[RMDB]
RNA sequence: GGGAACGACUCGAGUAGAGUCGAAAAAAUUCUUUAGUUUUUGGAGCUUCGAAGUUGAAUGCGUCAACUACAGUUAAGCCAUUCUCUUGAGCUUUGAAAGAUAAUGCUGAGCGUAAAGCUAAACGACCUACAGCUUCAUAUUCGUAUGAAGCUGUAGAAAAGAAACAACAACAACAAC
Reactivity to DMS in 0.01 (KOAc 150mM, MgCl2 10mM, bicine 150mM(pH8.5), 24C), signal-to-noise 3, nucleotides 027 to 126: a090a100u000u000c020u000u000u020a070g010u000u000u000u010u000g000g000a060g000c010u000u000c130g030a050a040g000u010u000g010a040a030u000g010c120g020u010c130a040a040c060u010a090c230a190g020u000u000a190a140g000c060c010a060u000u000c010u000c000u010u000g000a070g020c010u000u000u000g010a010a020a010g000a070u000a030a060u010g010c090u010g000a090g000c020g000u000a060a100a150g000c020u010a040a050a080c140g010a120c240
Reactivity to 2A3 in 0.01 (KOAc 150mM, MgCl2 10mM, bicine 150mM(pH8.5), 24C), signal-to-noise 1, nucleotides 027 to 126: a000a000u200u070c070u060u060u030a100g020u020u020u020u000u010g040g000a020g040c000u110u040c100g160a020a010g040u090u010g060a000a000u020g010c010g090u070c030a040a010c010u170a140c040a060g010u050u050a080a030g010c060c000a000u040u000c000u000c000u030u010g020a010g000c000u000u020u040g040a010a030a030g020a060u140a090a030u140g070c110u080g030a020g010c000g020u090a070a180a060g000c000u010a120a070a000c110g040a120c000